[RMDB]
RNA sequence: GGGAACGACUCGAGUAGAGUCGAAAAGAGGGGUGAUUGUCACGGAGCCGGACAGAGAAUUGGCGGUCACAUUGGAUGCCAUGGAUAUCACGCCACCCUUUACUCCCGGCGCGUUGCGCGGAGGCAGCCCAUGCCACCAAUUCGUUGGUGGCAUGGGAAAAGAAACAACAACAACAAC
Reactivity to DMS in 0.01 (KOAc 150mM, MgCl2 10mM, bicine 150mM(pH8.5), 24C), signal-to-noise 2, nucleotides 027 to 126: g000a060g050g000g010g030u000g000a060u010u000g030u000c050a150c070g000g020a100g020c010c040g020g000a060c100a100g000a160g000a070a140u010u000g010g010c010g010g010u000c080a110c140a150u010u000g000g000a110u030g000c030c030a140u000g000g000a120u000a030u030c070a080c080g010c020c060a110c040c020c020u000u010u010a090c190u000c010c010c020g020g000c040g060c060g030u000u010g020c050g020c100g000g020a040g010g000c060a080g010
Reactivity to 2A3 in 0.01 (KOAc 150mM, MgCl2 10mM, bicine 150mM(pH8.5), 24C), signal-to-noise 1, nucleotides 027 to 126: g070a030g000g050g000g010u010g020a120u050u140g020u050c020a020c200g060g020a010g060c040c000g000g000a010c050a070g090a030g040a150a120u100u020g020g050c060g020g040u070c020a030c050a230u060u260g110g030a030u080g030c000c040a000u000g020g060a040u070a020u230c030a030c080g000c050c020a060c020c020c000u000u040u010a050c000u000c010c000c000g000g000c040g000c020g070u140u170g010c050g000c030g040g020a020g000g010c030a030g010
Structure probing data (DMS and 2A3) for a 177-nucleotide construct. High 2A3 reactivity points to a flexible backbone, as in loops and unpaired stretches. The RNA was probed in 150 mM KOAc, 10 mM MgCl2 and 150 mM bicine (pH 8.5) at 24 C. The DMS profile rests on 1,734 reads. 2A3 adducts were read by reverse transcription with SuperScript II with manganese. The 2A3 profile rests on 1,108 reads.